Chemical mapping of a 207-nucleotide RNA with DMS and 2A3. 2A3 is a SHAPE reagent: it acylates the 2'-hydroxyl of flexible nucleotides of all four kinds. 2A3 adducts were read by reverse transcription with SuperScript II with manganese. The data come from the RNA Mapping Database (RMDB), library M2RFPK. For 2A3, 2,492 sequencing reads were counted. The DMS profile rests on 1,713 reads. The reactions ran in a buffer of 150 mM KOAc, 10 mM MgCl2 and 150 mM bicine (pH 8.5), at 24 C.

RNA sequence: GGGAACGACUCGAGUAGAGUCGAAAAACUGUUAUCUGACCAAUAACAGAAUGCACCACAGCGUAAAAUCAUCUGAUUGGGUGAGUUGGUCGCACCGCCAUUUGACGAACGAACGCCAAGCCUAAGCACUACGAGUAUGUGUUCGCACAUACUCGAACUAGAGUGAGGGUUUCGACCCUCACUCUAGAAAAGAAACAACAACAACAAC
Reactivity to DMS in 0.01 (KOAc 150mM, MgCl2 10mM, bicine 150mM(pH8.5), 24C), signal-to-noise 1, nucleotides 027 to 156: a220c010u010g000u000u000a000u000c000u000g020a060c120c070a300a040u010a010a000c020a000g030a140a080u010g020c070a160c090c010a050c020a020g080c020g030u010a030a050a120a150u010c010a050u000c000u020g030a160u020u000g010g010g050u020g010a300g010u000u000g030g000u000c020g000c020a050c020c010g000c060c070a120u020u000u000g050a030c000g010a060a140c090g000a090a070c020g030c000c010a050a190g030c010c000u000a020a010g010c060a050c020u000a110c020g030a020g020u000a000u010g050u000g010u000u000c300g020c040a000c000a030u000a010c000u000c000g000a000a010
Reactivity to 2A3 in 0.01 (KOAc 150mM, MgCl2 10mM, bicine 150mM(pH8.5), 24C), signal-to-noise 4, nucleotides 027 to 156: a000c000u000g000u000u000a010u020c000u010g000a000c000c000a000a000u000a000a000c000a000g040a090a120u150g040c060a040c060c000a040c070a050g070c020g060u070a030a140a020a080u060c040a020u000c050u110g080a150u110u160g160g000g010u040g000a020g010u020u050g010g000u010c000g040c030a020c000c030g010c010c010a060u090u050u090g050a040c040g040a200a040c030g000a080a020c020g000c020c020a030a020g000c020c030u160a150a030g060c040a050c120u210a080c040g000a000g000u000a000u000g030u000g020u040u110c250g040c090a000c000a010u000a000c000u010c000g000a010a020